The data come from the RNA Mapping Database (RMDB), library M2RFPK. Chemical mapping of a 207-nucleotide RNA with 2A3. The RNA was probed in 150 mM KOAc, 10 mM MgCl2 and 150 mM bicine (pH 8.5) at 24 C.
[RMDB]
RNA sequence: GGGAACGACUCGAGUAGAGUCGAAAACAGGAAACUGGUUAAUCGUUUACCUUGGUAGUAUAGCGGAAACCAUAAAUAAGAAGAACUCUAAGUGCUUGAGUAGAGUUAAAAUAAUUAGACAGGCAAUUAAGGUACUCCACGUUCGCGUGGAGUACAACGGCUGUCUAAAGUUCGCUUUAGACAGCCGAAAAGAAACAACAACAACAAC
Reactivity to 2A3 in 0.01 (KOAc 150mM, MgCl2 10mM, bicine 150mM(pH8.5), 24C), signal-to-noise 2, nucleotides 027 to 156: c050a010g150g020a080a070a020c020u050g000g040u050u040a170a120u090c010g000u000u050u050a100c020c010u070u110g040g010u010a020g010u010a050u100a100g030c010g030g010a010a050a000c000c000a010u100a200a060a050u160a140a050g080a060a000g030a050a000c000u000c000u020a000a010g000u010g250c000u020u010g000a000g000u000a000g010a000g020u120u130a010a000a000a000u070a020a010u200u010a000g000a020c000a000g040g000c010a010a010u170u050a140a020g150g000u000a010c010u000c000c000a010c000g000u000u040c190g040c000g120u010g010g000a010g000u000a000c000a000a000